[RMDB]
RNA sequence: GGGAACGACUCGAGUAGAGUCGAAAAGGGGUCCCAUCUCUAGCGUGGGAGCGUUGAUCUGGUGGCAUAUAUCGCUGAAGCCUCCACGGCGAGUCACCAGGGAGCUCCUCGGGUGGGACGGAGGCACCCAAAAGAUCACAAGUUCGCUUGUGAUCAAGGAUCUUAUGUGAUUCGUCACAUAAGAUCCAAAAGAAACAACAACAACAAC
Reactivity to DMS in 0.01 (KOAc 150mM, MgCl2 10mM, bicine 150mM(pH8.5), 24C), signal-to-noise 1, nucleotides 027 to 156: g000g000g050g010u020c010c010c000a040u000c010u020c030u000a240g010c160g050u020g000g000g030a020g030c000g010u000u020g000a050u000c000u010g000g040u010g010g090c060a300u000a200u000a210u000c040g000c000u010g010a080a140g030c030c010u020c030c000a300c030g010g000c000g000a060g020u000c000a030c000c000a060g030g040g000a040g060c010u010c010c010u010c000g050g010g000u010g000g010g000a030c010g020g020a010g040g040c010a050c000c010c010a090a130a130a180g000a010u000c000a020c000a020a050g000u000u000c300g020c000u000u000g010u000g010a020u010c000a130a120
Reactivity to 2A3 in 0.01 (KOAc 150mM, MgCl2 10mM, bicine 150mM(pH8.5), 24C), signal-to-noise 3, nucleotides 027 to 156: g010g000g040g020u040c000c000c000a030u010c080u030c070u150a120g090c090g160u300g040g010g010a010g000c000g190u280u000g000a000u000c000u000g000g010u000g000g040c070a010u250a030u070a100u300c020g030c010u000g010a030a010g010c000c000u000c000c000a020c020g020g000c020g020a090g010u000c000a000c010c010a000g010g000g000a000g000c010u000c000c000u010c010g010g000g000u010g000g010g000a000c010g000g000a000g000g000c000a020c000c000c000a040a110a020a040g000a000u010c000a000c000a000a000g030u070u080c170g120c150u000u000g000u000g000a000u000c000a000a020
The data come from the RNA Mapping Database (RMDB), library RNAMAK. Chemical mapping of a 207-nucleotide RNA with DMS and 2A3. As a SHAPE reagent, 2A3 marks flexible, mostly unpaired nucleotides at the ribose 2'-OH. 2A3 adducts were read by reverse transcription with SuperScript II with manganese. The reactions ran in a buffer of 150 mM KOAc, 10 mM MgCl2 and 150 mM bicine (pH 8.5), at 24 C.